[RMDB]
RNA sequence: GGGAACGACUCGAGUAGAGUCGAAAAGAUAUGGAGCCAGAACUACAGCAUGAUGAUCUUAAUAAUAAGAAUAGCUCUCGGAAACGAGAGCUAUAAGUGAUCUACCAUGCUGCUGGCUCCUAAGUCAGUAUACCUUCACGUUCGCGUGAAGGUAUACAAAAGAAACAACAACAACAAC
Reactivity to 2A3 in 0.01 (KOAc 150mM, MgCl2 10mM, bicine 150mM(pH8.5), 24C), signal-to-noise 2, nucleotides 027 to 126: g030a010u020a050u080g010g000a000g010c000c020a040g040a080a040c240u300a050c280a010g040c000a020u000g000a010u010g020a010u010c060u230u300a300a170u300a300a070u170a300a070g060a040a030u020a010g000c020u000c000u000c010g020g000a030a000a000c000g000a000g000a000g000c000u020a000u000a010a000g010u000g000a000u020c000u030a040c040c020a020u000g000c000u010g010c010u010g010g000c010u000c000c000u000a000a000g000u020c000a000
Reactivity to DMS in 0.01 (KOAc 150mM, MgCl2 10mM, bicine 150mM(pH8.5), 24C), signal-to-noise 2, nucleotides 027 to 126: g000a030u000a100u020g010g000a020g020c000c000a000g000a100a040c100u010a300c030a000g010c020a000u000g000a040u010g000a030u000c000u020u000a140a140u010a160a110u010a140a100g010a130a020u000a000g000c000u010c000u000c010g030g000a030a020a070c000g010a020g000a000g000c000u000a000u000a010a140g010u010g000a020u000c000u010a120c080c000a010u000g000c000u020g000c000u000g000g010c010u000c000c000u000a000a050g000u000c010a150